The record gives the reactivity of an RNA of 177 nucleotides to 2A3. The reactions ran in a buffer of 150 mM KOAc, 10 mM MgCl2 and 150 mM bicine (pH 8.5), at 24 C.

[RMDB]
RNA sequence: GGGAACGACUCGAGUAGAGUCGAAAAUUAUGACUUUGUAAUCCAAUUCAUUGGUGAUACUACAUAACUUCGCUAAUUGAUCAUUUUGAUCAAUAUAUCAUUCAAGUUUCUGCCCUAUCAGCUUGAUCGAACUUCUUUCCUUCGGGAAAGAAGUUCGAAAAGAAACAACAACAACAAC
Reactivity to 2A3 in 0.01 (KOAc 150mM, MgCl2 10mM, bicine 150mM(pH8.5), 24C), signal-to-noise 1, nucleotides 027 to 126: u030u040a000u000g070a000c210u000u040u100g000u140a000a000u010c000c010a010a000u070u070c030a050u170u160g150g010u070g040a050u140a100c000u010a060c000a060u020a000a190c000u120u110c070g030c070u040a000a010u030u030g040a000u000c070a090u000u190u070u300g000a000u000c000a060a000u120a000u000a040u000c040a110u070u070c000a020a020g000u000u080u070c060u030g000c050c000c000u050a080u030c010a000g040c020u040u000g000a000u150